[RMDB]
RNA sequence: GGGAACGACUCGAGUAGAGUCGAAAAAAAAAGGACCUACAGCCGAGCGAGUGACUGAAAACGGCAAAGUCACGAAGCAUCGUUAUACCUAUAUGGUCGUAGCGAAAUAAGAGUUGUUCCCAGUAAACUGAUGAGUAGAGUUCGCUCUACUCAUCAGAAAAGAAACAACAACAACAAC
Reactivity to 2A3 in 0.01 (KOAc 150mM, MgCl2 10mM, bicine 150mM(pH8.5), 24C), signal-to-noise 2, nucleotides 027 to 126: a000a000a000a000a000g110g010a000c000c010u010a000c020a020g070c040c060g050a030g040c000g020a060g080u000g020a000c000u060g090a120a000a030a260c050g130g030c120a140a060a000g000u000c010a020c000g010a070a030g030c000a040u020c010g000u030u010a000u010a030c000c000u110a120u050a050u300g020g000u000c090g000u010a000g010c000g040a060a080a060u140a160a030g000a010g010u000u000g000u000u000c000c000c000a000g000u030a000a040a060
Reactivity to DMS in 0.01 (KOAc 150mM, MgCl2 10mM, bicine 150mM(pH8.5), 24C), signal-to-noise 1, nucleotides 027 to 126: a040a040a050a140a050g000g000a010c000c000u060a010c020a300g040c250c030g040a150g000c010g000a300g020u000g000a000c000u000g000a080a000a120a030c110g000g050c120a050a110a000g000u000c000a000c000g000a090a140g000c020a160u000c030g000u000u000a000u000a070c000c010u000a070u030a000u040g030g000u000c080g000u000a020g000c000g000a050a060a090u040a080a170g000a040g020u020u000g000u000u000c000c000c000a020g020u000a000a040a110